[RMDB]
RNA sequence: GGGAACGACUCGAGUAGAGUCGAAAAAUGGCCGGAUUUAUGAUGACCCGCGACGGACAGUGUGUGGUAGGCACAGAACUUAAUGCAACACACCAUCGCCCGGUGUCUGAGGGAAAGGUACGCGGCGAGUUGUCCUUGCAUUCGUGCAAGGACAACUAAAAGAAACAACAACAACAAC
Reactivity to 2A3 in 0.01 (KOAc 150mM, MgCl2 10mM, bicine 150mM(pH8.5), 24C), signal-to-noise 1, nucleotides 027 to 126: a000u110g070g010c010c020g030g000a000u090u100u050a170u150g140a040u120g010a020c000c000c000g020c100g020a010c020g020g020a020c020a090g010u040g000u040g010u000g100g060u090a100g110g000c070a040c070a090g090a110a030c030u070u160a100a020u120g030c000a050a040c030a000c000a020c010c000a100u080c000g030c050c050c070g000g120u110g060u000c000u060g020a090g040g070g060a020a020a070g060g000u040a020c100g040c030g140g000c000g000
Reactivity to DMS in 0.01 (KOAc 150mM, MgCl2 10mM, bicine 150mM(pH8.5), 24C), signal-to-noise 1, nucleotides 027 to 126: a050u000g000g030c070c000g020g000a100u000u000u000a070u000g000a120u010g060a190c040c000c020g050c130g040a110c060g000g000a090c210a110g010u000g040u000g010u000g030g020u000a010g010g000c020a110c130a070g020a050a120c100u020u050a040a140u000g010c010a130a080c050a010c000a000c010c010a080u010c100g000c040c010c000g000g030u020g010u000c020u000g010a200g010g020g020a050a120a100g000g000u000a030c120g000c070g000g020c030g000

The record gives the reactivity of an RNA of 177 nucleotides to 2A3 and DMS. Conditions: 150 mM KOAc, 10 mM MgCl2 and 150 mM bicine (pH 8.5), 24 C. It was measured as part of the RMDB library OK2TRN. Values cover nucleotides 27 to 126. 2A3 adducts were read by reverse transcription with SuperScript II with manganese.